The data come from the RNA Mapping Database (RMDB), library OK1LIB. Structure probing data (2A3 and DMS) for a 177-nucleotide construct. For DMS, 1,194 sequencing reads were counted. DMS adducts were read by reverse transcription with MarathonRT. For 2A3 the reverse transcriptase was SuperScript II with manganese.
RNA sequence: GGGAACGACUCGAGUAGAGUCGAAAAUGCUUCAUGCGGCGUCACAACUGGUACCAGUCCAAAGAGUCCUUGUCCGAUAUUCGUGUUGGACGGACUGUGGCGUCAGUGGUAUCGGGGCGACCGAAUAGGCAGCGUUGUGCUUCGGCACAAUGCUGCCAAAAGAAACAACAACAACAAC
Reactivity to 2A3 in 0.01 (KOAc 150mM, MgCl2 10mM, bicine 150mM(pH8.5), 24C), signal-to-noise 2, nucleotides 027 to 126: u110g010c020u020u090c030a000u240g020c000g000g000c000g000u000c030a000c020a270a090c080u110g000g000u030a010c000c000a010g070u050c010c010a020a020a020g140a040g000u000c000c000u100u270g000u000c010c010g000a000u010a040u030u110c240g040u050g000u110u000g000g000a000c040g010g050a020c000u010g070u030g000g000c000g060u020c020a040g040u010g030g000u060a000u000c010g000g060g010g030c000g250a300c000c010g000a030a070u110a020
Reactivity to DMS in 0.01 (KOAc 150mM, MgCl2 10mM, bicine 150mM(pH8.5), 24C), signal-to-noise 1, nucleotides 027 to 126: u000g000c020u040u060c050a000u050g000c000g000g000c000g040u040c010a090c030a200a300c050u020g000g090u000a020c000c020a050g020u000c050c000a120a110a220g000a000g000u000c000c020u000u030g000u000c000c060g010a000u000a020u000u080c140g040u050g080u020u010g000g050a030c000g010g010a000c000u000g050u000g040g000c030g000u010c200a120g010u110g010g040u000a000u000c110g000g090g040g000c020g020a120c000c000g030a050a070u000a150